Annotation:
Structure probing data (2A3 and DMS) for a 207-nucleotide construct. For DMS, 2,574 sequencing reads were counted. For 2A3 the reverse transcriptase was SuperScript II with manganese. For 2A3, 4,828 sequencing reads were counted. The RNA was probed in 150 mM KOAc, 10 mM MgCl2 and 150 mM bicine (pH 8.5) at 24 C.
RNA sequence: GGGAACGACUCGAGUAGAGUCGAAAACUUCAUUGUAGGCAUCAGUAGACACAGAGCUAACCUUUUCGCCUUCUUUAUCGUGAGCUACUUGCUCUUGAUCAAGCAAGUAUUGAAGAUUGCGCAAUACCUUUUCGGCUUCACCACGCACAAACAAGAAAGUAAUUUGUGGUUUCGACCACAAAUUACUAAAAGAAACAACAACAACAAC
Reactivity to 2A3 in 0.01 (KOAc 150mM, MgCl2 10mM, bicine 150mM(pH8.5), 24C), signal-to-noise 6, nucleotides 027 to 156: c020u090u060c050a090u070u140g080u120a020g010g010c020a040u020c030a050g070u070a020g060a040c030a020c030a110g060a030g050c030u060a060a110c030c000u020u030u070u100c050g020c000c000u030u030c000u020u100u030a060u040c050g050u040g030a010g040c010u050a050c070u120u220g010c000u010c000u030u170g050a080u050c010a000a000g020c010a020a020g030u030a100u040u090g030a030a020g040a080u040u130g000c030g000c040a030a050u070a150c010c020u040u040u040u070c040g010g000c000u070u040c020a060c060c010a030c060g090c030a050c080a110a080a010c030a050a070g260a160a100
Reactivity to DMS in 0.01 (KOAc 150mM, MgCl2 10mM, bicine 150mM(pH8.5), 24C), signal-to-noise 1, nucleotides 027 to 156: c050u000u000c060a130u000u010g020u010a030g050g070c020a090u000c040a100g040u000a090g030a130c060a090c030a070g000a100g060c050u000a080a040c060c010u000u000u000u020c080g010c040c030u000u030c000u010u050u000a080u010c080g060u000g000a110g010c040u010a030c030u000u000g010c000u000c050u000u030g030a170u000c210a030a230g010c000a040a020g020u000a060u010u010g010a060a060g000a070u000u000g020c010g000c030a040a040u000a050c000c020u000u000u000u000c030g000g020c020u000u000c040a080c020c020a050c120g040c070a080c080a070a080a030c060a100a100g020a090a090